[RMDB]
Background: Chemical mapping of a 177-nucleotide RNA with 2A3. 2A3 is a SHAPE reagent: it acylates the 2'-hydroxyl of flexible nucleotides of all four kinds. Reactivities are given for positions 27 through 126. It was measured as part of the RMDB library OK1LIB. The 2A3 profile rests on 567 reads. For 2A3 the reverse transcriptase was SuperScript II with manganese. Conditions: 150 mM KOAc, 10 mM MgCl2 and 150 mM bicine (pH 8.5), 24 C.

RNA sequence: GGGAACGACUCGAGUAGAGUCGAAAAAGAAUUAAGUGUGAAAAUUGUCAACGAAGCAUUAUGAUUCCACGUCAAACGUUUGAUAAAAAACUAAAAAAAAUCAUCGUAUCUCAGGAUGAUACACAAACCCUUCAUGCACGUUCGCGUGCAUGAAGGGAAAAGAAACAACAACAACAAC
Reactivity to 2A3 in 0.01 (KOAc 150mM, MgCl2 10mM, bicine 150mM(pH8.5), 24C), signal-to-noise 2, nucleotides 027 to 126: a000g140a000a060u190u120a010a010g150u140g000u080g300a120a060a000a050u290u220g070u060c010a040a000c060g070a070a000g030c030a080u060u070a190u300g060a040u040u050c000c010a000c190g040u020c090a040a150a080c070g000u000u040u130g080a180u230a030a020a020a000a030a120c200u220a030a000a000a000a000a000a010a000u000c000a000u010c030g150u150a010u050c120u000c010a000g060g050a100u040g000a000u090a000c080a000c030a000a110a000